[RMDB]
RNA sequence: GGGAACGACUCGAGUAGAGUCGAAAAUGGUGUGCCCAGCUUCAGCCAGAUGCAGAAUCGGGGCCGCGACACCCGUGUCGAGUUCUGGGCGUUCGACCUGCUCUACCUCGACGGCCGCGCGCUGCUACACAGAUGAGUGUUUCGACACUCAUCUGUGAAAAGAAACAACAACAACAAC
Reactivity to DMS in 0.01 (KOAc 150mM, MgCl2 10mM, bicine 150mM(pH8.5), 24C), signal-to-noise 3, nucleotides 027 to 126: u010g020g010u010g020u010g000c000c010c030a070g020c180u000u000c090a100g000c040c050a100g020a130u000g020c090a080g010a100a070u010c010g040g000g010g020c030c030g010c010g000a060c110a110c070c040c060g000u000g030u000c010g010a050g000u000u000c070u000g000g000g010c030g000u000u010c070g000a100c070c070u010g000c040u000c040u010a130c130c040u000c050g010a080c040g020g020c020c030g000c030g010c300g000c020u010g020c040u000a190
Reactivity to 2A3 in 0.01 (KOAc 150mM, MgCl2 10mM, bicine 150mM(pH8.5), 24C), signal-to-noise 2, nucleotides 027 to 126: u110g020g000u090g000u120g080c010c010c000a010g020c040u080u070c010a030g010c040c020a080g030a150u140g020c000a020g100a130a030u080c020g060g020g020g030c000c020g050c010g010a040c040a050c100c060c040g100u090g020u060c020g000a040g050u120u120c030u040g000g030g000c020g030u030u060c040g050a090c000c000u060g000c000u010c010u070a100c020c020u030c010g060a110c030g110g040c020c000g040c000g010c010g000c010u060g020c010u080a080